[RMDB]
RNA sequence: GGGAACGACUCGAGUAGAGUCGAAAAGAGAACUUUCAAGAAGGAGGAUUUUUCCCCAAGACGCUGGUGGACUCUUGGAAUGGGAAAGAGGAGGGCGGAAAAAGAGGAGCGGGCCUCCCGAUCCGAGCAGCCGCGGACUUCGGUCCGCGGAAAAGAAACAACAACAACAAC
Reactivity to 2A3 in 0.01 (KOAc 150mM, MgCl2 10mM, bicine 150mM(pH8.5), 24C), signal-to-noise 1, nucleotides 027 to 129: g020a020g000a010a050c020u050u070u050c080a080a040g020a010a010g090g000a000g000g000a060u080u020u000u040u090c060c000c000c040a020a020g050a040c010g010c130u050g030g000u060g000g000a020c030u000c000u100u010g030g000a020a040u100g040g030g000a040a060a050g000a000g000g000a030g000g000g000c030g010g000a060a030a000a030a050g020a020g020g000a030g020c020g000g000g030c000c000u100c000c060c000g000a030u030c020c000g010a000g050c020a000g030
Reactivity to DMS in 0.01 (KOAc 150mM, MgCl2 10mM, bicine 150mM(pH8.5), 24C), signal-to-noise 3, nucleotides 027 to 129: g010a050g030a090a000c090u020u090u180c080a030a080g020a070a070g000g000a080g000g000a040u040u050u000u050u020c030c000c000c110a150a120g010a080c230g060c100u020g010g070u030g000g090a040c000u070c000u030u020g000g000a060a050u060g040g010g060a010a050a080g000a060g000g020a010g090g000g000c210g010g050a050a030a060a150a060g040a090g020g010a030g000c140g020g010g060c090c020u020c000c010c050g040a040u040c000c100g010a070g020c140a070g020